[RMDB]
RNA sequence: GGGAACGACUCGAGUAGAGUCGAAAACAAAACCAUUUUCAAGGGACUGUCUGUCGAGGCAAUGGGUUCUCUGAUCCACCAGAAAAUGCGCAAAUUCUUGAGGCCGUGCGCUAUUGGAUUCGACGCCAGGAAGUUAGCAAUUCGUUGCUAACUUCCUAAAAGAAACAACAACAACAAC
Reactivity to DMS in 0.01 (KOAc 150mM, MgCl2 10mM, bicine 150mM(pH8.5), 24C), signal-to-noise 2, nucleotides 027 to 126: c080a060a060a100a160c070c020a090u000u000u000u010c120a100a200g010g020g000a150c070u000g010u000c050u030g010u010c030g010a050g010g000c090a060a100u010g000g010g010u000u000c090u010c020u000g000a060u010c030c020a120c140c030a070g010a090a020a100a060u000g020c050g030c040a060a090a160u000u000c070u010u010g010a080g020g000c060c110g040u000g020c020g020c020u010a050u010u000g000g010a090u000u010c060g000a060c060g050c120c100
Reactivity to 2A3 in 0.01 (KOAc 150mM, MgCl2 10mM, bicine 150mM(pH8.5), 24C), signal-to-noise 1, nucleotides 027 to 126: c070a000a020a000a060c000c040a040u120u110u110u150c100a060a090g000g010g100a010c020u020g040u000c030u050g070u050c000g030a020g020g000c010a000a100u080g040g000g030u120u000c100u000c000u090g020a050u100c040c020a040c010c000a050g070a070a040a000a000u070g000c010g040c030a040a080a180u190u060c060u040u200g010a070g040g040c070c020g130u030g030c020g010c020u070a080u040u080g020g000a000u000u110c050g040a010c050g010c050c010
Structure probing data (DMS and 2A3) for a 177-nucleotide construct. The reactions ran in a buffer of 150 mM KOAc, 10 mM MgCl2 and 150 mM bicine (pH 8.5), at 24 C. The DMS profile rests on 1,315 reads. High DMS reactivity at an A or C suggests that its Watson-Crick edge is free. For DMS the reverse transcriptase was MarathonRT.